[RMDB]
RNA sequence: GGGAACGACUCGAGUAGAGUCGAAAAGUAGCGGAUGCUGCCGUCGGGCGCGGGUAUAAUUUGCAGGCUGUCGAGCAGGAUUUUCGGCUGUUUGCCGUAAUUUUCAUCCACAUAAAUGUCAAACCAGAGGGUAAUACCGAUUCGUCGGUAUUACCCUAAAAGAAACAACAACAACAAC
Reactivity to DMS in 0.01 (KOAc 150mM, MgCl2 10mM, bicine 150mM(pH8.5), 24C), signal-to-noise 1, nucleotides 027 to 126: g010u000a090g000c030g030g000a110u000g020c000u000g000c110c000g000u000c080g000g010g000c070g000c010g000g030g030u080a040u000a060a160u010u010u000g060c030a050g000g000c010u000g000u050c020g000a050g040c150a110g000g000a070u000u040u000u030c000g030g000c050u000g050u000u050u050g030c000c120g000u020a070a010u000u000u000u030c000a080u000c000c080a060c250a070u000a050a130a040u000g000u030c070a110a070a060c080c080a080g020
Reactivity to 2A3 in 0.01 (KOAc 150mM, MgCl2 10mM, bicine 150mM(pH8.5), 24C), signal-to-noise 3, nucleotides 027 to 126: g180u090a000g060c060g000g060a000u120g020c070u040g030c050c020g010u020c050g020g030g100c030g000c060g010g000g070u200a110u030a120a140u060u050u140g080c030a020g020g050c000u000g040u080c010g000a010g040c030a060g000g060a000u220u000u030u050c000g030g010c030u070g130u230u140u180g040c000c000g000u000a000a000u020u040u060u150c060a030u040c010c000a110c000a070u210a130a130a080u270g120u100c160a040a010a060c040c060a050g000